[RMDB]
RNA sequence: GGGAACGACUCGAGUAGAGUCGAAAAAACAGCCAAACUCUCGGAGACAGAUUAAGAAUUGAGUGCCGAAAGGGGCAGAACAACAAAUUCAUUUAGUCAAAUCAUCAAUGGACUUACUUGGCUUGUCUACCGUCACAAUAUUCGUAUUGUGACGGUAAAAAGAAACAACAACAACAAC
Reactivity to 2A3 in 0.01 (KOAc 150mM, MgCl2 10mM, bicine 150mM(pH8.5), 24C), signal-to-noise 3, nucleotides 027 to 126: a000a000c030a010g000c000c000a040a020a050c020u050c050u050c060g100g000a030g000a030c040a040g040a040u060u050a070a010g020a050a020u050u050g010a050g080u030g000c010c010g140a240a100a060g220g020g010g000c050a010g110a070a010c060a010a050c020a010a100a020u040u050c030a050u060u060u110a030g020u000c030a060a080a120u070c050a020u020c030a060a070u100g040g010a030c030u050u040a050c010u090u060g000g000c000u040u060g010u040c010
Reactivity to DMS in 0.01 (KOAc 150mM, MgCl2 10mM, bicine 150mM(pH8.5), 24C), signal-to-noise 5, nucleotides 027 to 126: a090a040c090a040g010c000c010a020a060a140c170u000c030u000c080g030g010a300g000a060c090a090g020a060u010u010a060a050g000a060a050u000u000g010a110g030u000g010c010c010g010a040a070a120g030g000g020g020c030a030g000a070a070c150a070a110c110a040a060a030u000u000c020a100u000u000u000a040g010u010c030a040a080a090u010c080a100u000c070a050a160u010g000g000a020c100u010u000a050c090u000u000g010g010c030u000u010g010u000c100
About this RNA: Structure probing data (2A3 and DMS) for a 177-nucleotide construct. 2A3 adducts were read by reverse transcription with SuperScript II with manganese. The 2A3 profile rests on 3,937 reads. DMS adducts were read by reverse transcription with MarathonRT.